An RNA of 207 nucleotides, treated with 2A3 and read out base by base. 2A3 adducts were read by reverse transcription with SuperScript II with manganese. The data come from the RNA Mapping Database (RMDB), library ARCHII. For 2A3, 678 sequencing reads were counted. The RNA was probed in 150 mM KOAc, 10 mM MgCl2 and 150 mM bicine (pH 8.5) at 24 C.

[RMDB]
RNA sequence: GGGAACGACUCGAGUAGAGUCGAAAAAUUAAAGCAGAAUCGCCAUGUCGUCAUCCUGUCUGUCGGAGGGCGGUGCGGUUAAAGCCAAAAGACAAACUACGCAUGUAGAUCCGGUGGUCUAGGUACUGCGGACGCGGGUUCAAUUCCCGCCGCCUCCGUACUAGGGAACGUUCGCGUUCCCUAGUACAAAAGAAACAACAACAACAAC
Reactivity to 2A3 in 0.01 (KOAc 150mM, MgCl2 10mM, bicine 150mM(pH8.5), 24C), signal-to-noise 1, nucleotides 027 to 156: a000u150u160a060a110a000g000c050a000g090a040a020u080c050g020c040c020a060u210g040u040c010g020u000c000a010u000c030c000u070g020u160c080u120g190u160c080g020g000a020g010g010g020c000g030g000u010g000c020g000g030u020u060a050a060a010g020c060c020a070a060a020a020g030a020c050a030a130a030c030u100a000c020g090c110a150u270g020u040a010g010a110u060c020c070g070g060u070g010g020u000c010u000a000g010g010u050a080c020u020g010c010g000g000a030c020g000c020g070g030g000u010u120c000a010a030u020u050c020c000c000g010c010c010g000c000c010u000c010c030